The record gives the reactivity of an RNA of 177 nucleotides to DMS and 2A3. Reactivities are given for positions 27 through 126. The 2A3 profile rests on 2,809 reads. For DMS, 1,371 sequencing reads were counted. The RNA was probed in 150 mM KOAc, 10 mM MgCl2 and 150 mM bicine (pH 8.5) at 24 C.

[RMDB]
RNA sequence: GGGAACGACUCGAGUAGAGUCGAAAAGAUAUGGACACCUGUAGGGAGCUCCGACUCGGAAACGAGUUGGGAGCAUCGAUCUACACAUGGUGUCCUAAGUCAAAAGUAGGCCGUUCGCGGCCUACAAGUUCAAUGUAGACUUCGGUCUACAUUGAACAAAAGAAACAACAACAACAAC
Reactivity to DMS in 0.01 (KOAc 150mM, MgCl2 10mM, bicine 150mM(pH8.5), 24C), signal-to-noise 1, nucleotides 027 to 126: g010a000u000a110u010g000g000a020c010a010c020c000u000g020u000a020g010g000g000a040g040c000u000c010c020g010a000c010u000c000g020g010a110a040a090c000g020a050g000u000u000g040g060g010a030g030c000a150u010c130g000a100u000c010u010a000c000a090c300a170u000g010g000u000g010u000c000c000u010a000a080g010u000c000a080a050a130a210g000u000a000g000g030c000c010g010u000u010c210g000c050g020g000c010c000u000a000c000a030a120
Reactivity to 2A3 in 0.01 (KOAc 150mM, MgCl2 10mM, bicine 150mM(pH8.5), 24C), signal-to-noise 1, nucleotides 027 to 126: g020a000u060a010u030g000g010a000c000a000c020c030u030g010u010a020g000g040g050a090g010c000u000c000c000g000a000c010u000c000g020g000a030a000a000c010g000a000g030u030u130g300g020g000a000g000c010a030u120c040g000a050u050c000u050a010c050a010c040a160u280g060g000u010g000u000c000c010u000a000a000g020u000c010a070a020a080a090g020u020a000g020g030c080c000g020u040u120c300g010c030g200g010c010c000u000a000c000a000a000